[RMDB]
RNA sequence: GGGAACGACUCGAGUAGAGUCGAAAACCACUAGUCGUGAAGAUGCGACUUACCCGCGGAAGGACGGAAAGACCCCGUGAACCUUCACUGCAGCUUGGCAUUGGCCGCUGGUCCGGCGCGUAGAGGAGAUUUAUUAGACCUUCGGGUCUAAUAAAUCAAAAGAAACAACAACAACAAC
Reactivity to 2A3 in 0.01 (KOAc 150mM, MgCl2 10mM, bicine 150mM(pH8.5), 24C), signal-to-noise 3, nucleotides 027 to 126: c010c010a010c080u060a030g010u010c020g020u030g160a230a140g120a210u280g040c000g000a000c000u010u060a040c010c030c000g000c010g070g030a070a040g020g010a030c020g030g060a060a150a050g170a100c000c000c000c010g010u020g030a040a080c040c050u050u030c020a020c000u050g020c020a020g000c020u070u110g010g000c030a140u020u150g140g000c030c030g030c040u030g000g030u000c020c000g050g000c010g000c030g020u060a040g000a040g120g070a090
Reactivity to DMS in 0.01 (KOAc 150mM, MgCl2 10mM, bicine 150mM(pH8.5), 24C), signal-to-noise 3, nucleotides 027 to 126: c020c020a110c220u000a040g020u000c000g000u010g010a180a120g000a140u000g000c010g000a010c020u000u000a080c120c040c010g020c070g010g020a140a090g000g010a090c030g010g010a110a080a130g000a150c090c020c010c050g010u000g010a100a180c110c070u000u000c020a130c080u000g000c020a060g000c050u010u010g030g000c020a170u000u000g020g000c000c000g010c040u020g010g000u000c030c020g010g010c040g000c050g020u010a120g000a130g000g010a140
Conditions: 150 mM KOAc, 10 mM MgCl2 and 150 mM bicine (pH 8.5), 24 C. Structure probing data (2A3 and DMS) for a 177-nucleotide construct. For 2A3 the reverse transcriptase was SuperScript II with manganese. For 2A3, 2,928 sequencing reads were counted. 2A3 is a SHAPE reagent: it acylates the 2'-hydroxyl of flexible nucleotides of all four kinds. The data come from the RNA Mapping Database (RMDB), library RFMREP.